RNA sequence: GGGAACGACUCGAGUAGAGUCGAAAAGAUAUGGAACGGUCUGGAGUCGCGGGCUCGGAAACGAGCCACGCGACUAUGAAGGAGCCGUUCCUAAGUCAAAAGCAUCACGUCUUCGGACGUGAUGCAACCAUACUUCUAGGUUCGCCUAGAAGUAUGGAAAAGAAACAACAACAACAAC
Reactivity to DMS in 0.01 (KOAc 150mM, MgCl2 10mM, bicine 150mM(pH8.5), 24C), signal-to-noise 3, nucleotides 027 to 126: g010a020u000a040u010g000g010a030a020c000g000g010u000c010u000g000g000a010g040u000c010g040c020g000g020g040c000u000c010g040g000a010a010a050c010g000a030g020c010c000a010c040g050c000g030a000c000u000a100u020g000a180a230g000g000a030g020c000c010g020u000u000c000c000u000a010a060g000u000c030a070a080a090a140g010c000a000u000c000a000c010g010u010c000u000u010c210g010g010a000c000g010u000g000a010u000g000c000a020a030
Reactivity to 2A3 in 0.01 (KOAc 150mM, MgCl2 10mM, bicine 150mM(pH8.5), 24C), signal-to-noise 1, nucleotides 027 to 126: g000a000u020a000u050g000g010a010a000c000g000g010u020c020u030g010g000a010g000u000c010g040c000g050g000g000c010u010c010g000g010a000a000a020c000g000a000g040c010c000a010c000g020c020g040a010c010u000a060u020g010a000a000g020g000a030g250c000c000g000u010u010c000c000u000a010a000g010u000c010a010a020a050a160g020c000a000u000c000a000c000g020u010c010u040u120c300g120g010a000c000g000u000g000a000u000g000c000a000a000

An RNA of 177 nucleotides, treated with DMS and 2A3 and read out base by base. The DMS profile rests on 4,956 reads. For 2A3, 11,518 sequencing reads were counted. The reactions ran in a buffer of 150 mM KOAc, 10 mM MgCl2 and 150 mM bicine (pH 8.5), at 24 C. It was measured as part of the RMDB library TTRDEL.